[RMDB]
RNA sequence: GGGAACGACUCGAGUAGAGUCGAAAAACAGUAGUCCUGGCAUUACGAUGCCAGGACUACUGAAAGUUGUAGCCUUUCAAACAGAGCUCUGCAUGUACACACCUGUAUUGGAACACUACAGCUCCAAUACAUUAGUGCCCUUCGGGGCACUAAUGUAAAAAGAAACAACAACAACAAC
Reactivity to DMS in 0.01 (KOAc 150mM, MgCl2 10mM, bicine 150mM(pH8.5), 24C), signal-to-noise 1, nucleotides 027 to 126: a110c000a020g000u000a010g040u010c000c000u000g000g000c030a070u000u000a130c180g070a030u000g000c040c000a010g000g000a000c000u010a000c000u000g000a010a030a020g030u000u000g000u000a070g030c070c300u000u020u010c040a010a120a100c080a010g000a220g020c100u000c020u030g000c060a000u050g070u010a110c160a000c050a040c020c060u000g000u020a060u000u000g000g000a000a020c160a160c100u020a060c020a010g000c010u010c000c010a130a070